[RMDB]
RNA sequence: GGGAACGACUCGAGUAGAGUCGAAAACGACAUGGCUUCGGCCAUGUCGAAAGGACGAGUGAGACCGAAACGGAGGUAGGUCCAACUACCUACUCACUCAAAAAAUCCGUUUGUUCGCAAACGGAAACUUCCUACUAUCGUUCGCGAUAGUAGGAAGAAAAGAAACAACAACAACAAC
Reactivity to 2A3 in 0.01 (KOAc 150mM, MgCl2 10mM, bicine 150mM(pH8.5), 24C), signal-to-noise 2, nucleotides 027 to 126: c000g020a010c000a000u000g010g000c010u080u030c170g060g000c000c010a000u010g000u000c000g000a000a000a000g050g020a030c120g000a000g020u010g010a000g040a050c000c050g080a240a180a050c190g070g040a010g010g000u010a000g000g030u050c090c000a090a130c000u000a010c000c020u000a050c010u030c000a000c000u000c000a090a050a000a000a000a040u000c000c000g000u000u010u010g020u020u040c260g000c120a010a000a000c000g000g000a020a010a020
Reactivity to DMS in 0.01 (KOAc 150mM, MgCl2 10mM, bicine 150mM(pH8.5), 24C), signal-to-noise 3, nucleotides 027 to 126: c010g000a000c020a000u000g010g000c000u010u000c190g040g020c000c000a010u010g000u000c020g000a010a030a150g000g010a140c180g000a030g020u000g010a020g010a300c040c060g000a060a100a130c210g000g000a120g010g000u000a020g010g000u010c140c100a070a190c020u010a000c010c000u000a190c020u000c010a010c000u000c000a010a010a060a090a150a130u000c000c000g010u000u000u000g000u020u000c170g000c010a010a020a000c000g000g000a000a050a070